[RMDB]
RNA sequence: GGGAACGACUCGAGUAGAGUCGAAAAGAUAUGGAUGUGGUCAAGACAUGCACCUACUCGGAAACGAGUAGUGUGCAACAGCUUGCACAUCCUAAGUCAAACUCAGAUAAGUUCGCUUAUCUGAGAAUCUUUAAGAUCAGUUCGCUGAUCUUAAAGAAAAAGAAACAACAACAACAAC
Reactivity to DMS in 0.01 (KOAc 150mM, MgCl2 10mM, bicine 150mM(pH8.5), 24C), signal-to-noise 5, nucleotides 027 to 126: g000a010u000a040u010g000g000a010u000g010u000g020g010u010c020a010a010g030a040c130a170u020g020c000a000c000c000u000a000c000u000c000g030g000a020a020a040c000g000a020g010u000a000g010u020g030u000g010c010a050a040c130a170g010c000u000u000g000c000a020c000a000u000c000c000u000a000a050g010u000c010a140a150a250c010u000c000a000g000a010u000a010a010g020u000u020c290g010c000u000u000a000u000c000u010g000a010g000a070a040
Reactivity to 2A3 in 0.01 (KOAc 150mM, MgCl2 10mM, bicine 150mM(pH8.5), 24C), signal-to-noise 5, nucleotides 027 to 126: g000a000u020a000u060g000g000a010u000g030u020g050g260u300c010a000a010g020a060c110a190u300g000c000a000c010c000u000a000c000u000c000g000g000a030a000a000c010g000a010g000u000a000g020u040g000u010g020c000a000a010c010a000g000c000u000u010g000c000a000c000a000u000c000c000u000a000a000g010u000c030a060a020a110c000u000c010a000g000a020u000a010a000g020u030u140c210g080c190u010u010a010u010c000u020g000a000g020a000a060
Chemical mapping of a 177-nucleotide RNA with DMS and 2A3. The DMS profile rests on 11,363 reads. For 2A3, 18,061 sequencing reads were counted. The reactions ran in a buffer of 150 mM KOAc, 10 mM MgCl2 and 150 mM bicine (pH 8.5), at 24 C.